Chemical mapping of a 177-nucleotide RNA with 2A3 and DMS.
DMS adducts were read by reverse transcription with MarathonRT.
For DMS, 8,156 sequencing reads were counted.
In probing experiments dimethyl sulfate is read out at A N1 and C N3, which are open when not base-paired.
It was measured as part of the RMDB library OK1LIB.
2A3 is a SHAPE reagent: it acylates the 2'-hydroxyl of flexible nucleotides of all four kinds.
RNA sequence: GGGAACGACUCGAGUAGAGUCGAAAACUGAGAACAUUAAGAUAAUCCAGAAUAGCAUCGCUCGGCUGCAAACAUUUAGUCACAUGGAUAUCGACAUCACUAACAAGAGCAAUUUGGUGCCGCAUGGCCUUCGAAUGUAGUUCGCUACAUUCGAAGGAAAAGAAACAACAACAACAAC
Reactivity to 2A3 in 0.01 (KOAc 150mM, MgCl2 10mM, bicine 150mM(pH8.5), 24C), signal-to-noise 9, nucleotides 027 to 126: c050u100g030a050g090a150a040c060a140u200u160a150a040g040a110u130a160a110u070c030c000a010g050a100a110u120a090g020c030a030u080c060g020c040u000c020g050g000c010u050g000c030a020a090a050c030a070u080u130u150a050g050u090c030a030c010a140u080g060g000a040u050a060u130c020g040a020c020a080u060c030a030c110u100a150a020c070a110a030g040a010g070c040a040a020u090u080u170g050g000u030g000c010c010g070c070a070u110g070g000
Reactivity to DMS in 0.01 (KOAc 150mM, MgCl2 10mM, bicine 150mM(pH8.5), 24C), signal-to-noise 5, nucleotides 027 to 126: c050u020g010a070g000a090a090c160a080u010u000a140a100g010a080u010a060a110u000c040c030a030g000a080a050u030a120g020c000a030u030c090g000c030u000c040g010g010c030u050g010c100a060a090a070c110a060u010u010u020a050g010u000c090a060c110a080u020g020g000a070u010a040u000c050g020a080c060a060u010c070a040c090u010a060a070c160a070a090g010a070g010c070a030a060u000u030u020g000g020u000g020c030c020g030c110a060u010g010g010